An RNA of 177 nucleotides, treated with DMS and 2A3 and read out base by base.
The reactions ran in a buffer of 150 mM KOAc, 10 mM MgCl2 and 150 mM bicine (pH 8.5), at 24 C.
2A3 adducts were read by reverse transcription with SuperScript II with manganese.
[RMDB]
RNA sequence: GGGAACGACUCGAGUAGAGUCGAAAAGGGCAUUAUAAAGUUAAUUUUCCAGUGACAUUAGGUCAUGAAUUUUCUGGUGAAAUCGUUGAAGUUGGAGCAGACGUUAAAGAUUUUAAAGUUGGUGACCGAGGAAUUAUCAGUUCGCUGAUAAUUCCUCAAAAGAAACAACAACAACAAC
Reactivity to DMS in 0.01 (KOAc 150mM, MgCl2 10mM, bicine 150mM(pH8.5), 24C), signal-to-noise 2, nucleotides 027 to 126: g000g050g010c040a030u010u020a200u030a090a140a080g000u000u030a040a060u010u010u000u000c030c020a290g000u040g000a040c090a160u040u020a120g000g020u020c050a020u000g000a110a060u030u000u010u020c030u000g000g030u070g010a010a060a060u020c060g020u000u000g000a030a160g010u010u000g000g010a020g030c010a030g000a030c050g000u000u000a040a020a050g000a030u000u020u030u020a050a080a130g010u000u000g000g010u030g020a090c160c110
Reactivity to 2A3 in 0.01 (KOAc 150mM, MgCl2 10mM, bicine 150mM(pH8.5), 24C), signal-to-noise 4, nucleotides 027 to 126: g060g020g040c060a060u040u090a110u230a160a110a000g120u090u180a210a070u080u170u100u030c030c030a070g010u010g100a010c060a110u170u300a070g060g050u020c000a010u130g110a070a050u120u110u110u080c050u060g000g030u090g040a110a090a020u090c050g000u000u050g030a060a010g020u120u040g000g030a020g040c010a030g010a020c020g000u000u040a080a030a020g030a040u020u000u040u180a060a170a080g010u030u000g000g060u010g020a000c000c060